[RMDB]
RNA sequence: GGGAACGACUCGAGUAGAGUCGAAAAACGGGCGACCAUAGUCGGCGGCCGCAGACGCGAAGCCGGGUGAGCUACCCGUGGGCAGGCUGAAGCGGGGGUAAGACCCCGUGGAGGGCCGAACGCACGUUACGCAAACAAUGUUCGCAUUGUUUGCGUAAAAAGAAACAACAACAACAAC
Reactivity to 2A3 in 0.01 (KOAc 150mM, MgCl2 10mM, bicine 150mM(pH8.5), 24C), signal-to-noise 3, nucleotides 027 to 126: a000c010g020g020g000c020g020a050c020c010a060u080a040g110u050c050g010g010c000g070g000c010c010g000c020a100g030a120c050g020c010g120a040a000g020c010c000g010g000g030u060g010a070g010c040u080a040c000c010c010g020u030g000g030g030c060a030g000g020c000u030g010a000a000g010c000g000g000g000g000g000u040a050a000g150a160c010c000c000c030g000u000g000g020a050g030g050g000c010c000g010a040a010c040g030c010a010c000g010u030
Reactivity to DMS in 0.01 (KOAc 150mM, MgCl2 10mM, bicine 150mM(pH8.5), 24C), signal-to-noise 3, nucleotides 027 to 126: a060c100g020g000g000c100g020a070c020c050a040u020a170g010u010c040g000g040c050g000g050c040c010g000c060a090g020a130c170g070c010g010a080a210g000c020c000g020g020g010u000g020a160g030c090u020a130c040c030c000g010u000g010g000g040c030a220g000g000c010u020g000a300a260g020c000g020g030g000g000g030u010a120a210g020a180c000c000c000c000g010u000g010g020a240g000g000g010c010c010g010a020a130c020g000c030a090c010g000u040